[RMDB]
RNA sequence: GGGAACGACUCGAGUAGAGUCGAAAAGUAGUAGAAGCGCGUUUAGAGGGGGUCCGAGCUGUUUAUCCUUCGAUUUUCCCAUCGUGAUGAGGUACCUGACAGUGCCGUUGGAUUAUGCCAUGAUUAGGAUUAUCGAUGAGGUCGAUAUGGACGACGGAAGUACAGUCUUCUUCGGAAGACUGUACUUAAAAGAAACAACAACAACAAC
Reactivity to DMS in 0.01 (KOAc 150mM, MgCl2 10mM, bicine 150mM(pH8.5), 24C), signal-to-noise 1, nucleotides 027 to 156: g030u000a110g010u010a090g030a060a090g020c040g020c030g050u000u000u000a120g020a160g000g010g040g040g010u000c030c060g000a150g000c020u020g050u030u000u000a090u000c020c040u000u000c010g020a180u000u000u000u020c000c060c010a080u020c020g040u020g000a090u000g010a140g040g060u020a010c040c020u010g030a100c140a080g000u000g010c040c020g010u010u000g020g000a190u000u010a100u000g000c050c050a040u000g000a150u000u000a040g010g000a090u000u000a020u000c030g020a060u000g000a100g030g030u000c020g020a090u000a090u000g030g030a090c010g020a100c010g010g010
Reactivity to 2A3 in 0.01 (KOAc 150mM, MgCl2 10mM, bicine 150mM(pH8.5), 24C), signal-to-noise 1, nucleotides 027 to 156: g030u040a000g000u000a000g020a150a000g040c020g000c010g090u030u100u120a150g020a140g000g020g000g000g020u060c030c010g000a000g000c040u080g040u070u120u120a060u040c010c010u020u000c000g000a000u000u000u010u010c000c010c000a010u000c030g060u000g070a120u090g000a080g040g040u040a070c000c000u030g060a000c000a030g030u020g000c050c000g060u060u150g030g000a040u070u060a110u290g100c060c010a010u030g000a020u080u120a030g040g000a010u090u010a010u040c040g000a040u070g020a070g070g000u030c030g000a030u030a110u280g070g020a010c030g070a000c050g050g110